[RMDB]
Source: RMDB libraries RFM100 and RFMREP, as collected in RNAgym.
Chemical mapping of a 177-nucleotide RNA with 2A3 and DMS.
As a SHAPE reagent, 2A3 marks flexible, mostly unpaired nucleotides at the ribose 2'-OH.
The RNA was probed in 150 mM KOAc, 10 mM MgCl2 and 150 mM bicine (pH 8.5) at 24 C.
RNA sequence: GGGAACGACUCGAGUAGAGUCGAAAAUGGACAUUUAUUUUUAUUCAGUUUCUUCUCAAGGUGAAGAUAACUCUUUGUAAAUGUCCUACAGAAAUAUAGUAGCUUUCUGUUCUUCCUUUGCAAGUAAUCUACUGUGAAAUUUCGAUUUCACAGUAGAAAAAGAAACAACAACAACAAC
Reactivity to 2A3 in 0.01 (KOAc 150mM, MgCl2 10mM, bicine 150mM(pH8.5), 24C), signal-to-noise 8, nucleotides 027 to 126: u110g000g000a000c000a000u000u000u020a020u030u180u060u070u080a150u100u120c010a000g000u010u000u000c000u000u000c030u030c120a150a190g210g030u120g050a000a000g000a020u190a090a020c000u020c040u040u110u070g000u000a000a000a000u000g000u000c000c000u000a000c000a000g030a020a030a000u150a020u070a090g290u100a030g080c060u000u000u000c000u000g010u060u000c020u020u020c010c020u070u050u140g090c090a100a040g040u130a100a060
Reactivity to DMS in 0.01 (KOAc 150mM, MgCl2 10mM, bicine 150mM(pH8.5), 24C), signal-to-noise 5, nucleotides 027 to 126: u020g010g000a000c000a010u000u000u000a000u000u020u040u020u040a070u050u020c260a020g010u000u000u000c010u000u000c000u010c150a150a180g020g030u030g000a020a000g000a020u020a000a000c010u000c160u010u010u010g010u010a000a000a010u000g010u000c000c010u000a020c010a010g010a010a020a030u010a090u010a200g000u020a200g010c220u010u000u000c000u000g000u000u010c080u000u000c010c000u000u030u030g010c160a070a140g000u030a060a080